[RMDB]
RNA sequence: GGGAACGACUCGAGUAGAGUCGAAAACUCUGAUCGUGUAGAGCACCGAAAACCACGAGGAGGAGGCGCAGUGUUCUCUCCUGAGCGUGAAGCCGGCUCUUGGUGUCGCUUUGCUGCGACUGCCUUUCAUAGUCCGUCCCUUCGGGGACGGACUAUGAAAAGAAACAACAACAACAAC
Reactivity to 2A3 in 0.01 (KOAc 150mM, MgCl2 10mM, bicine 150mM(pH8.5), 24C), signal-to-noise 1, nucleotides 027 to 126: c070u000c070u000g060a100u000c010g000u000g080u200a000g010a010g230c030a020c020c060g060a010a000a030a050c070c000a050c060g000a020g020g040a050g000g000a030g050g000c040g050c000a070g000u000g070u220u070c110u010c000u060c050c060u000g080a010g050c040g070u060g050a070a000g110c100c000g040g000c000u000c030u020u040g000g000u050g010u020c000g010c000u040u070u220g040c090u040g000c000g010a050c040u040g090c000c000u000u030u080